RNA sequence: GGGAACGACUCGAGUAGAGUCGAAAAAAGCGCUCAAAGAAUUCAGAGCCGCCACCCUUACCGGUAGCCACGAAUUCUUCUGUACGGAUCUGCAACUCUUUCAUUGAUUCGAAAACGUCGUCAGCCGUAAGGCCAAACUGACCGAAUGCGUAGGUCAUGAAAUGCUGGUAUUCGUACCAGCAUUUCAAAAAGAAACAACAACAACAAC
Reactivity to 2A3 in 0.01 (KOAc 150mM, MgCl2 10mM, bicine 150mM(pH8.5), 24C), signal-to-noise 2, nucleotides 027 to 156: a010a000g100c050g000c040u030c070a060a040a020g020a070a040u120u100c080a050g030a040g120c040c030g000c010c020a050c020c020c030u040u090a080c050c090g020g010u030a020g030c040c030a050c050g010a010a030u080u000c000u050u010c100u080g070u040a010c000g030g010a050u070c050u060g060c050a060a110c030u070c030u100u180u070c030a080u020u190g020a030u010u020c020g030a000a030a030a040c030g050u030c000g020u020c050a020g030c000c010g010u060a050a060g020g000c010c020a030a130a040c080u090g000a040c000c000g070a150a040u150g010c010g050u080a020g000g010u000c010a000
Reactivity to DMS in 0.01 (KOAc 150mM, MgCl2 10mM, bicine 150mM(pH8.5), 24C), signal-to-noise 1, nucleotides 027 to 156: a080a110g030c040g080c090u000c030a090a040a070g010a090a060u000u000c000a200g000a120g020c040c140g010c010c010a030c030c010c020u000u000a090c110c020g000g080u000a120g000c020c070a230c170g020a040a040u000u020c000u000u030c060u000g050u000a130c050g030g000a040u000c050u010g000c090a070a020c040u000c030u010u010u010c040a120u010u000g070a040u010u030c040g040a100a050a140a120c080g000u010c020g000u010c040a090g000c000c000g000u000a060a080g020g040c000c050a050a080a080c110u010g000a010c000c050g010a090a060u010g010c060g010u000a070g000g010u030c010a170
Annotation: Chemical mapping of a 207-nucleotide RNA with 2A3 and DMS. Values cover nucleotides 27 to 156. 2A3 adducts were read by reverse transcription with SuperScript II with manganese. It was measured as part of the RMDB library OK3TST. The RNA was probed in 150 mM KOAc, 10 mM MgCl2 and 150 mM bicine (pH 8.5) at 24 C.